Record summary
The record gives the reactivity of an RNA of 207 nucleotides to 2A3 and DMS. For DMS the reverse transcriptase was MarathonRT.
RNA sequence: GGGAACGACUCGAGUAGAGUCGAAAAGGGCGAUACUGUGAACAUCAUACGUACAAGUGUGAAGGAUAUAAGGGAAUAAGCAUUUCGUACAAAAAGGCGUAUGAUAGAAAUAUCAUGGAGGUUGUAUGAGCAAGAAAGGCAAGAAAGCUUUACAGCAGCUUCGAUUCUAAUUCGUUAGAAUCGAAGCAAAAGAAACAACAACAACAAC
Reactivity to 2A3 in 0.01 (KOAc 150mM, MgCl2 10mM, bicine 150mM(pH8.5), 24C), signal-to-noise 4, nucleotides 027 to 156: g040g010g000c050g010a040u060a110c040u060g030u080g160a070a090c010a120u090c030a030u050a080c020g040u070a060c050a130a070g050u040g010u040g130a060a060g050g010a020u010a000u030a120a050g050g010g010a030a020u040a030a000g010c020a010u020u090u090c070g030u030a040c050a040a060a000a030a040g070g000c030g020u050a010u020g010a000u010a010g000a010a070a000u080a020u030c000a020u020g010g050a040g010g030u000u010g010u040a070u150g060a000g000c000a000a060g010a020a000a000g000g010c010a020a010g000a030a000a000g000c030u100u070u060a050c060a040g070c020a010
Reactivity to DMS in 0.01 (KOAc 150mM, MgCl2 10mM, bicine 150mM(pH8.5), 24C), signal-to-noise 2, nucleotides 027 to 156: g010g020g050c000g000a060u000a030c050u000g040u010g000a090a170c070a150u010c050a080u000a070c070g000u000a140c130a050a100g050u000g070u020g000a110a200g020g020a040u010a020u020a040a060g040g010g040a060a090u000a020a050g000c000a030u000u000u010c060g010u000a050c040a000a040a070a090a040g040g050c030g040u010a020u000g020a040u000a020g020a090a070a110u000a010u000c000a050u000g030g010a070g000g000u000u020g010u010a040u010g020a090g060c040a000a050g000a000a030a060g020g000c020a010a060g000a040a050a010g000c000u000u000u000a090c060a080g050c080a140